[RMDB]
RNA sequence: GGGAACGACUCGAGUAGAGUCGAAAAGGUCAUUGCACUGAUCCGGGCGUCGGAGACCGUCGAUAUCGCCCGGGCCGGACUGAUCGAGCUGCUCGACAUCGACGAGAUCCAGGCCCAGGCAAUCCUGCCGAACGCCAUAAUUCGUUAUGGCGUUCGGAAAAGAAACAACAACAACAAC
Reactivity to DMS in 0.01 (KOAc 150mM, MgCl2 10mM, bicine 150mM(pH8.5), 24C), signal-to-noise 1, nucleotides 027 to 126: g010g000u050c100a050u000u020g010c100a130c100u000g050a150u000c030c040g000g010g000c020g020u080c090g020g010a040g000a150c080c000g020u000c000g030a040u020a030u000c040g020c100c000c030g000g000g030c000c000g010g000a110c170u060g000a070u060c040g010a030g000c000u010g000c100u000c010g000a050c040a070u010c030g000a030c060g110a060g010a220u000c020c000a240g000g020c000c010c000a060g000g010c080a050a030u010c000c020u020g000
Reactivity to 2A3 in 0.01 (KOAc 150mM, MgCl2 10mM, bicine 150mM(pH8.5), 24C), signal-to-noise 4, nucleotides 027 to 126: g050g000u070c110a110u050u220g050c060a040c170u070g060a100u070c040c020g020g020g000c040g010u200c150g020g010a040g080a180c030c010g060u070c020g000a010u030a060u170c080g030c010c000c000g000g010g000c010c010g020g010a090c020u080g010a300u060c000g020a010g030c040u070g000c030u070c120g050a070c010a140u030c010g050a020c030g010a030g010a080u020c010c030a080g000g070c000c010c000a000g000g000c000a010a060u020c010c020u040g090